[RMDB]
RNA sequence: GGGAACGACUCGAGUAGAGUCGAAAACUGGAAAACUUCAUUGGAAGCCUUUUGUCAAGACAGGAAACAACCGAGAACGAGUUCCAUGGGUAUCACAUCAUCCUUUGGACGUCAAACGUGGCGUCUAACUCCUUAGGGAGUUCGCUCCCUAAGGAGUAAAAGAAACAACAACAACAAC
Reactivity to 2A3 in 0.01 (KOAc 150mM, MgCl2 10mM, bicine 150mM(pH8.5), 24C), signal-to-noise 9, nucleotides 027 to 126: c030u030g070g050a010a030a030a060c040u110u090c050a170u050u210g070g020a040a020g040c010c020u020u070u060u110g120u080c040a080a070g040a090c040a070g080g080a090a130a050c060a030a060c020c030g040a050g030a080a040c040g020a050g070u060u010c020c020a050u100g050g000g000u100a070u130c030a040c010a110u120c010a040u040c010c020u060u050u090g030g000a020c010g000u000c020a070a170a170c200g170u110g010g000c000g000u010c000u000a020
Reactivity to DMS in 0.01 (KOAc 150mM, MgCl2 10mM, bicine 150mM(pH8.5), 24C), signal-to-noise 3, nucleotides 027 to 126: c060u000g000g000a030a060a060a150c110u000u000c020a110u020u020g010g000a050a140g000c060c010u000u020u000u010g010u000c070a050a030g000a100c070a040g010g040a110a060a080c140a030a100c040c000g030a070g030a040a050c160g000a080g030u020u000c020c000a060u030g010g020g000u010a060u030c100a060c090a040u020c110a080u000c000c010u000u020u010g000g000a020c000g010u020c000a030a090a130c240g060u020g010g000c020g010u010c000u000a090